This 177-nucleotide RNA was probed chemically with 2A3. Conditions: 150 mM KOAc, 10 mM MgCl2 and 150 mM bicine (pH 8.5), 24 C.
RNA sequence: GGGAACGACUCGAGUAGAGUCGAAAACCUAUGCUUCCGCCAGCGGUCCCCUUUUUGGGGCCCCAGCUUCAGUGCAGCAAAGGGGUUUCGGCUCCCAAGCGGUCUGACGCCCUGUCACGGUUUCCCUCUUCUAUGAGAGCUUCGGCUCUCAUAGAAGAAAAGAAACAACAACAACAAC
Reactivity to 2A3 in 0.01 (KOAc 150mM, MgCl2 10mM, bicine 150mM(pH8.5), 24C), signal-to-noise 2, nucleotides 027 to 126: c000c000u030a050u040g040c030u110u060c050c050g040c030c030a010g010c010g030g030u070c040c000c000c010u000u140u120u230u220g030g000g010g070c010c000c010c010a010g010c010u100u090c070a080g030u060g180c040a000g000c010a030a060a040g040g000g000g000u010u020u030c020g000g000c010u020c020c020c000a040a030g040c050g000g050u030c090u090g030a060c050g030c020c020c010u040g080u070c020a020c090g050g000u000u020u050c010c000c010u010